[RMDB]
RNA sequence: GGGAACGACUCGAGUAGAGUCGAAAACCCGAAAGGGAAUCGGGUUAAGAUUUCCCGAGCCGGGACGUGGCGGUUGACGGCGACGUUAGGAAGUCCGGAGACGCCGGCGGGGGCCUCGGGAAGAGUUCAACUGCGCAUUUUUCGAAAUGCGCAGUUGAAAAGAAACAACAACAACAAC
Reactivity to 2A3 in 0.01 (KOAc 150mM, MgCl2 10mM, bicine 150mM(pH8.5), 24C), signal-to-noise 1, nucleotides 027 to 126: c000c000c030g010a070a030a050g170g050g040a000a080u010c010g010g010g000u090u060a070a000g040a240u040u060u000c000c000c000g000a010g000c000c000g030g090g050a020c010g000u030g010g010c030g060g140u050u050g030a020c000g020g010c070g000a010c050g090u120u130a140g050g190a280a000g050u190c020c030g000g020a100g000a000c000g000c020c000g000g080c000g000g000g060g010g000c000c010u010c000g000g000g000a000a020g020a000g020u000u000
The record gives the reactivity of an RNA of 177 nucleotides to 2A3.